The record gives the reactivity of an RNA of 177 nucleotides to DMS and 2A3. 2A3 is a SHAPE reagent: it acylates the 2'-hydroxyl of flexible nucleotides of all four kinds. The data come from the RNA Mapping Database (RMDB), library TTRDEL. The reactions ran in a buffer of 150 mM KOAc, 10 mM MgCl2 and 150 mM bicine (pH 8.5), at 24 C. For DMS, 3,646 sequencing reads were counted.
[RMDB]
RNA sequence: GGGAACGACUCGAGUAGAGUCGAAAAGAUAUGGAUCAUGGCAUCGAUCUGGUUGCCUCGGAAACGAGGCAUCCAGGGAGCCAUAUCCUAAGUCAAAGCUUGUUUCAUGUUCGCAUGAAACAAGCAAGAUAGAUUCACCGUUCGCGGUGAAUCUAUCAAAAGAAACAACAACAACAAC
Reactivity to DMS in 0.01 (KOAc 150mM, MgCl2 10mM, bicine 150mM(pH8.5), 24C), signal-to-noise 3, nucleotides 027 to 126: g010a030u000a160u010g000g000a010u000c180a000u000g000g020c000a270u000c100g010a080u000c010u010g000g020u000u000g000c000c000u000c000g010g000a060a030a120c000g010a010g010g000c000a010u000c000c000a030g000g000g010a020g030c010c000a010u020a020u000c000c000u000a040a120g000u000c020a110a150a130g000c010u000u000g010u000u000u000c000a000u010g000u000u020c180g010c000a000u000g000a010a010a010c000a000a000g020c000a010a010
Reactivity to 2A3 in 0.01 (KOAc 150mM, MgCl2 10mM, bicine 150mM(pH8.5), 24C), signal-to-noise 3, nucleotides 027 to 126: g020a010u050a020u120g000g000a020u040c060a020u160g010g000c050a290u130c170g150a210u150c020u000g000g010u000u000g000c000c000u000c010g020g010a060a060a030c010g000a000g000g000c010a000u000c000c000a000g010g060g000a000g020c010c000a010u000a000u000c000c010u010a060a020g050u020c060a100a060a050g000c000u000u000g000u000u000u000c000a000u010g060u030u110c300g000c130a000u000g000a010a000a000c010a000a000g000c000a000a010